Structure probing data (2A3 and DMS) for a 177-nucleotide construct. The DMS profile rests on 870 reads. For 2A3 the reverse transcriptase was SuperScript II with manganese. Reactivities are rounded to 0.1 and cut off at 0 and 3. Source: RMDB library RFMREP, as collected in RNAgym.
[RMDB]
RNA sequence: GGGAACGACUCGAGUAGAGUCGAAAAGCCCGGAUGCCGCCGGCUCGUCACGGACUCGCGCGUAACCCUCCUCCGCUUCAUCGGUUACGCACAAGCUGUUCGACCCACCAGCCACGGCCUUCCGUGGGUGACCAACUUUGUUCGCAAAGUUGGUCACAAAAGAAACAACAACAACAAC
Reactivity to 2A3 in 0.01 (KOAc 150mM, MgCl2 10mM, bicine 150mM(pH8.5), 24C), signal-to-noise 1, nucleotides 027 to 126: g060c010c020c000g030g020a030u050g010c010c010g090c110c230g020g010c000u020c030g030u000c020a030c050g070g030a130c000u030c110g020c010g000c010g020u020a020a010c010c010c020u040c010c020u090c030c000g020c090u150u110c030a170u070c030g000g000u000u020a000c000g060c000a000c020a060a020g000c000u030g000u050u010c030g010a160c000c080c000a030c020c000a010g000c000c000a000c000g030g020c020c030u170u050c020c000g010u170g060g040
Reactivity to DMS in 0.01 (KOAc 150mM, MgCl2 10mM, bicine 150mM(pH8.5), 24C), signal-to-noise 1, nucleotides 027 to 126: g010c010c020c030g050g000a070u000g040c040c020g000c100c140g000g010c020u000c160g000u000c080a060c050g020g000a080c020u000c090g010c020g000c010g000u000a030a030c000c000c160u000c040c010u000c050c060g000c070u000u000c070a080u000c150g010g030u000u000a000c010g070c080a020c020a030a040g050c090u020g000u000u000c080g000a160c040c010c120a060c160c100a100g000c000c010a150c000g000g000c080c090u000u010c000c000g020u000g010g010